An RNA of 207 nucleotides, treated with 2A3 and DMS and read out base by base.
RNA sequence: GGGAACGACUCGAGUAGAGUCGAAAAGCAGUUUCACUCACUGUAGACUCAGAGCGCUGAGUGUCAGUCGUGCUACCACAUGCACGUGAUCAGAGUAUGUGUGAACUCUGACUGACGACACAAUCGCUUGUGUCCUAUAUAAUGAAACUGGUGAGUCGCUAAUACGAUAGUUCGCUAUCGUAUUAGCAAAAGAAACAACAACAACAAC
Reactivity to 2A3 in 0.01 (KOAc 150mM, MgCl2 10mM, bicine 150mM(pH8.5), 24C), signal-to-noise 9, nucleotides 027 to 156: g080c010a000g000u000u000u000c020a020c020u020c010a080c030u020g000u020a010g000a000c000u000c010a020g020a040g130c080g010c050u010g010a010g000u000g000u000c010a000g010u010c010g010u010g010c020u090a130c020c080a060c010a070u070g000c010a010c080g050u120g090a130u150c050a020g020a000g040u030a040u130g160u050g060u060g100a050a030c000u000c020u040g000a010c000u010g010a010c010g010a000c000a000c000a020a150u260c060g010c150u030u010g000u000g000u000c000c000u000a010u010a010u020a030a030u030g010a010a010a000c000u010g030g120u100g060a060g070u110c080
Reactivity to DMS in 0.01 (KOAc 150mM, MgCl2 10mM, bicine 150mM(pH8.5), 24C), signal-to-noise 4, nucleotides 027 to 156: g000c000a030g020u000u000u000c010a020c020u010c030a090c140u010g000u010a030g010a040c010u000c010a050g010a300g050c120g030c060u000g010a150g020u000g010u000c020a030g010u000c000g030u000g020c010u000a300c120c080a040c120a080u000g010c000a130c040g020u000g030a160u010c080a090g000a130g040u010a030u010g020u000g000u000g010a060a070c010u000c010u000g040a030c010u010g010a040c000g020a020c010a010c030a040a110u000c120g000c120u000u010g030u000g020u000c020c010u000a020u000a040u010a020a030u000g010a010a020a020c010u010g010g020u000g010a130g000u000c120
Background:
For DMS, 9,091 sequencing reads were counted. For 2A3 the reverse transcriptase was SuperScript II with manganese. The reactions ran in a buffer of 150 mM KOAc, 10 mM MgCl2 and 150 mM bicine (pH 8.5), at 24 C.